[RMDB]
RNA sequence: GGGAACGACUCGAGUAGAGUCGAAAAGUCCCCAGUAUGACGUUAAACUGCUGACUCAUACCUACUGACACCGGUUGCUCAACAGGCUGUGUGGGACAAUAGAAUAACAAGGCUGUCAAUUUGAGCUAAAACUCCUCGGGGUUCGCCCCGAGGAGAAGAACUAGUUAUUCUUCGGAAUAACUAGUUCAAAAGAAACAACAACAACAAC
Reactivity to 2A3 in 0.01 (KOAc 150mM, MgCl2 10mM, bicine 150mM(pH8.5), 24C), signal-to-noise 4, nucleotides 027 to 156: g010u000c000c000c020c000a010g010u030a020u130g000a010c040g010u020u040a020a100a040c030u080g010c010u020g030a050c010u020c040a050u060a110c010c050u080a060c050u100g070a030c020a050c080c040g110g010u070u090g000c010u000c030a040a040c010a090g110g000c050u050g030u020g020u040g140g020g020a020c000a020a060u090a090g130a080a050u140a080a040c030a120a020g090g000c020u020g050u100c020a030a060u070u040u090g010a010g010c010u040a060a070a110a150c000u010c000c000u010c000g010g000g010g020u040u050c130g070c000c000c000c000g000a000g000g000a000g000a000a000
Reactivity to DMS in 0.01 (KOAc 150mM, MgCl2 10mM, bicine 150mM(pH8.5), 24C), signal-to-noise 1, nucleotides 027 to 156: g010u000c000c000c000c060a080g020u000a000u020g000a020c000g040u000u000a010a040a130c020u000g000c050u000g010a180c070u000c050a050u010a040c030c050u020a130c050u010g010a120c020a110c030c040g020g040u000u000g010c040u010c020a060a130c060a050g000g020c060u010g070u020g020u010g020g000g000a090c010a060a070u000a090g000a140a110u000a070a050c110a100a080g000g030c010u000g020u000c050a060a180u000u000u010g010a070g040c010u000a050a050a120a120c020u000c000c000u010c000g050g010g030g040u000u000c260g010c050c020c000c010g020a020g000g010a010g000a000a040

Annotation: Structure probing data (2A3 and DMS) for a 207-nucleotide construct. The RNA was probed in 150 mM KOAc, 10 mM MgCl2 and 150 mM bicine (pH 8.5) at 24 C. For 2A3, 3,358 sequencing reads were counted. Source: RMDB library M2RFPK, as collected in RNAgym.